Chemical mapping of a 207-nucleotide RNA with 2A3 and DMS. DMS adducts were read by reverse transcription with MarathonRT. For DMS, 1,168 sequencing reads were counted. For 2A3, 1,154 sequencing reads were counted.
RNA sequence: GGGAACGACUCGAGUAGAGUCGAAAAGAUUCCUCGUUGUUGAGCGAGGUUUAAACAAAUCGACCACACAAACGUAGAGCCGACUACGGAUUUAUAAAUUAAGGCAUUACGUGUGAUAAGGAGACAAAAAACGAUGUUGUGUUCGCACAACAUCGAAUCUACGAAGCAACUUCGGUUGCUUCGUAGAAAAAGAAACAACAACAACAAC
Reactivity to 2A3 in 0.01 (KOAc 150mM, MgCl2 10mM, bicine 150mM(pH8.5), 24C), signal-to-noise 2, nucleotides 027 to 156: g140a080u230u150c000c000u000c000g010u000u000g000u000u020g000a010g010c020g000a000g070g000u080u080u020a020a020a020c090a000a000a020u000c010g000a020c000c000a000c000a020c020a060a110a050c020g000u000a000g000a000g020c000c070g220a000c030u000a000c000g000g000a010u050u290u050a190u120a130a020a010u170u100a000a000g010g000c010a010u030u250a040c040g000u050g000u000g020a020u040a090a080g140g000a070g020a020c170a130a130a020a030a000a040c040g010a010u000g000u000u020g020u000g020u060u030c150g050c050a000c000a000a010c000a000u000c000g000a000a000
Reactivity to DMS in 0.01 (KOAc 150mM, MgCl2 10mM, bicine 150mM(pH8.5), 24C), signal-to-noise 1, nucleotides 027 to 156: g000a300u020u030c000c020u000c040g000u000u000g030u000u000g000a240g000c000g000a100g010g030u020u000u010a100a160a080c030a060a080a110u030c030g000a130c020c050a220c040a210c000a020a100a050c060g000u030a100g000a190g070c060c000g010a110c130u000a160c080g080g000a240u000u000u000a100u000a040a090a020u020u000a080a300g000g000c000a140u000u000a060c000g000u090g000u000g000a060u000a140a070g030g030a300g000a110c070a070a000a080a200a100a080c030g010a000u000g010u000u000g020u000g000u030u000c300g000c000a000c030a000a000c000a000u000c000g010a000a080